[RMDB]
RNA sequence: GGGAACGACUCGAGUAGAGUCGAAAACCGGACGGUUGUUCCAGGAGAAGUGGGGUGAGGGCCCAGGGUCAACUUGUUAACGAUCGUUGGGAAUCUAUAAGUGCCGAGAAUACUCGCACUGACUUCGCUCUUGCUGCCUGAUCAGUGAUCGAAGGGUGGACAAGUAACAGUUCGCUGUUACUUGUCCAAAAGAAACAACAACAACAAC
Reactivity to 2A3 in 0.01 (KOAc 150mM, MgCl2 10mM, bicine 150mM(pH8.5), 24C), signal-to-noise 1, nucleotides 027 to 156: c000c000g000g100a030c070g040g000u000u030g000u070u000c040c020a000g040g000a070g010a070a000g030u040g000g040g000g020u030g000a010g020g050g010c000c000c000a010g000g000g000u000c030a050a090c150u160u230g070u230u300a080a070c020g010a070u090c070g130u070u010g010g000g000a070a020u010c080u070a100u020a180a010g010u000g110c170c110g000a010g050a250a070u230a300c010u000c010g000c010a000c000u030g010a020c000u000u010c000g000c000u010c000u030u120g000c000u020g020c000c020u010g000a020u060c020a030g050u010g040a060u160c020g030a120a090g130g030g000u000
Chemical mapping of a 207-nucleotide RNA with 2A3. For 2A3 the reverse transcriptase was SuperScript II with manganese.